[RMDB]
RNA sequence: GGGAACGACUCGAGUAGAGUCGAAAAAGAAAGAAAUUACUGGACGGGCUUGAAAAUCAAUGCAAAGUGGCGUCGACCAGAUUUGAGAGUCUAGUCGAAGAUGGUCUCGACUUCUUUGACAUAUGGGCCUCGGAUUAUUAUUCGUAAUAAUCCGAGGAAAAGAAACAACAACAACAAC
Reactivity to 2A3 in 0.01 (KOAc 150mM, MgCl2 10mM, bicine 150mM(pH8.5), 24C), signal-to-noise 1, nucleotides 027 to 126: a010g110a040a050a000g030a000a180a060u280u090a130c040u030g020g020a020c000g010g050g070c010u080u070g070a030a030a000a090u080c070a070a020u040g050c060a120a050a040g100u060g070g010c030g160u090c030g010a030c010c010a020g030a050u040u060u000g050a090g010a000g070u060c100u170a030g070u030c030g000a010a010g040a010u060g010g050u000c040u020c050g250a290c000u030u030c000u000u090u000g030a030c030a010u190a120u140g050g050g120
Reactivity to DMS in 0.01 (KOAc 150mM, MgCl2 10mM, bicine 150mM(pH8.5), 24C), signal-to-noise 2, nucleotides 027 to 126: a070g000a100a070a090g000a080a090a080u000u000a050c050u010g020g010a070c080g030g010g000c030u000u000g000a100a050a040a050u020c060a090a040u000g020c100a040a040a050g010u000g000g000c030g000u020c150g000a060c010c020a040g010a160u000u010u010g010a210g010a120g000u000c160u010a060g020u000c000g000a010a010g000a120u000g030g000u010c030u010c090g010a060c030u000u000c010u000u000u000g000a050c040a050u000a070u010g000g000g010